[RMDB]
RNA sequence: GGGAACGACUCGAGUAGAGUCGAAAAACGGAGGUAAGCAGACAAAUCACCUCCAGAGGACCCCUUCAGCGAACAGAGAGCUCUGAGCCGCGAGGAGUAAGAUCAUAGCGAUAGGAGGAGAUGCUAGCACUAUUCCUCUGUUCGCAGAGGAAUAGUGAAAAGAAACAACAACAACAAC
Reactivity to DMS in 0.01 (KOAc 150mM, MgCl2 10mM, bicine 150mM(pH8.5), 24C), signal-to-noise 2, nucleotides 027 to 126: a110c150g000g010a030g010g000u000a090a120g030c180a100g010a090c150a050a080a160u010c090a050c000c010u000c000c020a060g000a130g000g000a140c130c010c020c070u010u000c080a090g010c040g010a050a040c050a050g000a120g010a120g020c060u000c010u010g010a130g020c070c050g030c070g010a100g010g010a010g000u000a070a050g000a060u000c040a060u000a120g010c060g000a110u000a110g010g010a090g000g000a040g000a060u010g000c060u000a100g010
Reactivity to 2A3 in 0.01 (KOAc 150mM, MgCl2 10mM, bicine 150mM(pH8.5), 24C), signal-to-noise 2, nucleotides 027 to 126: a010c070g000g000a000g010g020u060a090a000g070c080a070g140a240c050a090a230a060u110c040a040c000c010u000c000c000a000g020a010g050g040a050c010c010c010c000u010u110c100a020g010c030g020a060a030c010a020g070a010g000a010g060c000u000c010u050g030a020g060c010c010g040c000g040a040g010g000a060g030u030a070a000g040a080u090c020a100u100a050g000c030g050a030u050a080g050g010a010g040g040a060g020a020u130g040c030u010a030g050